[RMDB]
RNA sequence: GGGAACGACUCGAGUAGAGUCGAAAAGAGGCUAGUGUUUUAAACAUGCACCCUAGGCCAGCCAGAGAUAAUGUCACAAGAUUAUCAAGUUGGUGUAAACACGCCGUGGGAAAAAAUUUAUGGUUCAGUGCGUCGAGUGCUAUCUUUGGAACAGUAGCCUAAGAACGAGAUUCGUCUCGUUCUUAGGAAAAGAAACAACAACAACAAC
Reactivity to DMS in 0.01 (KOAc 150mM, MgCl2 10mM, bicine 150mM(pH8.5), 24C), signal-to-noise 2, nucleotides 027 to 156: g000a130g020g020c020u050a060g010u000g000u000u000u000u000a030a140a090c070a100u020g020c030a160c000c030c020u000a130g010g000c030c020a070g040c010c020a090g000a160g020a050u000a020a090u000g000u010c130a300c150a070a230g000a090u000u020a070u000c040a110a120g030u000u000g000g050u000g020u020a080a130a060c060a040c000g020c000c020g000u010g000g000g000a010a070a040a080a110a170u000u000u010a050u010g010g010u000u000c050a080g060u000g010c050g000u000c000g040a110g020u010g010c020u000a060u010c030u000u010u000g020g030a020a070c050a070g020u000a090g010
Reactivity to 2A3 in 0.01 (KOAc 150mM, MgCl2 10mM, bicine 150mM(pH8.5), 24C), signal-to-noise 3, nucleotides 027 to 156: g080a010g000g050c030u030a020g030u020g090u070u080u050u170a070a170a020c040a020u110g020c030a040c000c000c020u060a050g040g000c000c020a000g020c000c020a020g010a010g000a080u010a040a080u130g080u150c010a030c030a130a080g030a140u050u050a040u130c030a000a120g060u080u050g050g020u030g020u080a150a160a020c030a010c070g010c040c040g010u060g000g000g000a050a050a020a000a030a110u160u280u190a110u090g080g020u060u080c050a030g050u040g070c020g020u070c020g010a010g020u010g020c010u020a040u020c030u000u040u030g010g000a020a000c010a020g080u070a020g050